[RMDB]
RNA sequence: GGGAACGACUCGAGUAGAGUCGAAAAAGCCUGGUCGAUACGUCGACCAGGCAAUGCCGCCACAACGGCUUCCUGGCGUGGCGGAUCUCAUCCAAUGGAGCAACGCUCCGGGUACGUCCGGAGCGAAAAAAGCUCUGCUUCUUCGGAAGCAGAGCAACUUAGGAACACAGUUCGCUGUGUUCCUAAGAAAAGAAACAACAACAACAAC
Reactivity to 2A3 in 0.01 (KOAc 150mM, MgCl2 10mM, bicine 150mM(pH8.5), 24C), signal-to-noise 2, nucleotides 027 to 156: a000g300c010c000u000g010g000u010c000g000a000u000a080c150g070u020c000g000a000c000c000a000g010g000c010a000a000u010g010c000c020g000c000c000a010c000a060a010c030g060g010c000u160u150c020c010u020g010g010c020g000u010g000g020c010g000g000a010u040c040u030c010a130u130c080c070a020a130u190g000g040a010g000c000a000a110c000g020c020u000c000c040g010g000g010u220a140c070g090u040c000c010g020g010a010g000c000g000a000a000a000a000a010a000g000c000u000c030u000g000c000u010u010c000u000u060c100g100g000a000a000g000c000a000g000a000g000c000a000a000

An RNA of 207 nucleotides, treated with 2A3 and read out base by base.
Values cover nucleotides 27 to 156.
The reactions ran in a buffer of 150 mM KOAc, 10 mM MgCl2 and 150 mM bicine (pH 8.5), at 24 C.